RNA sequence: GGGAACGACUCGAGUAGAGUCGAAAAAAGUGAGCGCGCUUAUCGGAUUUUGCGCCUGCCCGGAUCCGAAGGCGUGGAGAAGGCAGGAUCGCCAAGGGAACAUGCCUGGGUUCCCGAGGUUAAACCCUUACAGGCUCGCUGAUGACGGGUACGCCCCCUACAGUAAAAUGUUCGCAUUUUACUGUAGAAAAGAAACAACAACAACAAC
Reactivity to DMS in 0.01 (KOAc 150mM, MgCl2 10mM, bicine 150mM(pH8.5), 24C), signal-to-noise 2, nucleotides 027 to 156: a040a050g000u010g010a040g040c020g010c060g030c030u000u010a090u000c070g010g010a060u000u010u010u010g050c020g010c000c000u010g000c020c020c030g020g010a060u010c010c000g010a030a110g010g020c040g020u000g020g010a220g010a150a110g010g020c000a060g020g000a060u000c060g040c000c030a030a300g000g030g030a030a030c010a040u000g010c070c050u020g010g020g000u010u000c000c010c020g010a210g020g020u000u000a110a060a090c040c010c030u010u010a140c110a090g040g020c010u000c040g070c010u000g020a110u000g010a150c090g000g000g000u000a080c050g000c040c000c010c060
Reactivity to 2A3 in 0.01 (KOAc 150mM, MgCl2 10mM, bicine 150mM(pH8.5), 24C), signal-to-noise 5, nucleotides 027 to 156: a010a020g090u050g010a050g020c030g000c010g010c040u080u110a120u230c020g020g000a030u060u130u130u300g040c020g000c000c010u010g000c010c000c000g040g030a030u010c000c010g020a040a040g130g000c040g000u050g030g030a080g030a070a010g000g000c000a010g010g030a020u040c010g010c010c000a010a010g000g000g000a000a010c000a030u110g040c010c040u040g020g010g000u000u000c000c000c000g000a000g000g000u000u030a060a090a090c030c020c000u040u100a080c030a030g020g020c010u020c030g000c020u070g020a120u120g040a050c050g010g000g030u050a030c080g030c000c000c000c000